RNA sequence: GGGAACGACUCGAGUAGAGUCGAAAAGAUAUGGAGAGCUCGAUAAGAUGGGUUUCGGAAACGAAACCACAUCUUUUGACGAGCUCCUCCUAAGUCGAGGGUUUAGGCACUUCGGUGCCUAAACCAAUCAUCAUUACGACUUCGGUCGUAAUGAUGAAAAAGAAACAACAACAACAAC
Reactivity to 2A3 in 0.01 (KOAc 150mM, MgCl2 10mM, bicine 150mM(pH8.5), 24C), signal-to-noise 1, nucleotides 027 to 126: g010a010u040a000u100g000g000a000g000a000g020c010u000c030g020a040u060a290a150g010a010u010g030g000g000u010u010u010c010g020g000a040a000a010c000g030a000a000a000c000c010a060c000a020u000c040u050u070u020u020g080a020c000g000a000g000c000u000c010c000u030c010c000u010a080a010g030u010c010g040a190g040g150g000u030u000u000a000g010g000c010a000c000u030u070c300g060g000u000g000c000c010u000a000a000a000c020c010a010a000
Reactivity to DMS in 0.01 (KOAc 150mM, MgCl2 10mM, bicine 150mM(pH8.5), 24C), signal-to-noise 2, nucleotides 027 to 126: g010a040u000a270u010g000g000a030g010a060g010c000u000c000g020a100u000a010a010g010a010u000g000g010g000u000u000u000c000g000g010a070a080a120c010g010a000a000a000c000c000a040c010a010u000c000u010u000u010u000g010a240c070g000a010g000c000u010c120c030u000c000c000u000a030a140g000u000c010g010a160g000g010g000u000u000u000a000g010g000c000a000c010u000u020c210g010g010u000g000c000c000u000a000a010a000c000c010a030a020
An RNA of 177 nucleotides, treated with 2A3 and DMS and read out base by base. Source: RMDB library TTRDEL, as collected in RNAgym. Reactivities are given for positions 27 through 126. 2A3 adducts were read by reverse transcription with SuperScript II with manganese.